[RMDB]
RNA sequence: GGGAACGACUCGAGUAGAGUCGAAAAAUUUAAAGGCCAGGACGGUCACCUUUGGGGUGGUGACAAGUGUGAUCACUUGGGUGGUGGCUGUGUUUGCGGUUCUCCCAGGAAUCUCGUUUACCAGAUCGCGAUAUCAGUGCUUCGGCACUGAUAUCGCAAAAGAAACAACAACAACAAC
Reactivity to 2A3 in 0.01 (KOAc 150mM, MgCl2 10mM, bicine 150mM(pH8.5), 24C), signal-to-noise 1, nucleotides 027 to 126: a010u300u280u190a180a040a000g100g010c000c030a000g080g000a000c000g000g000u040c000a000c000c000u030u000u140g050g000g000g050u060g000g000u000g190a000c010a050a000g120u060g020u070g300a100u000c000a000c000u020u000g030g000g010u010g000g100u000g000g010c060u020g090u020g020u030u030u060g110c060g000g030u080u010c010u000c000c000c000a000g120g030a000a080u000c060u000c010g060u100u110u000a130c070c030a090g010a270u060c020
The record gives the reactivity of an RNA of 177 nucleotides to 2A3. The RNA was probed in 150 mM KOAc, 10 mM MgCl2 and 150 mM bicine (pH 8.5) at 24 C. Source: RMDB library OK1LIB, as collected in RNAgym.